[RMDB]
RNA sequence: GGGAACGACUCGAGUAGAGUCGAAAAACUCGACCGAGAAUGCGGUCGAGACUCGUGCAAAUAAGAGCCUCGACAGAUGCACGAGAAAACGAGGCUACAACAAACAAAGAAAACUAAACAAAUGAAAGGACUUCGUCGAGUUCGCUCGAUGAAGUCCAAAAGAAACAACAACAACAAC
Reactivity to 2A3 in 0.01 (KOAc 150mM, MgCl2 10mM, bicine 150mM(pH8.5), 24C), signal-to-noise 3, nucleotides 027 to 126: a000c000u000c000g000a000c000c000g060a040g220a140a200u300g200c040g000g000u050c000g000a000g000a000c000u010c000g000u000g000c000a000a000a210u130a300a000g010a040g050c000c000u020c000g100a110c030a060g030a060u030g000c010a000c000g010a000g010a000a020a010a030c060g000a000g000g000c030u160a050c040a090a030c030a000a270a000c070a010a260a020g110a170a170a040a000c050u170a060a020a110c120a000a060a090u130g050a070a020a050

An RNA of 177 nucleotides, treated with 2A3 and read out base by base. Reactivities are rounded to 0.1 and cut off at 0 and 3. Conditions: 150 mM KOAc, 10 mM MgCl2 and 150 mM bicine (pH 8.5), 24 C.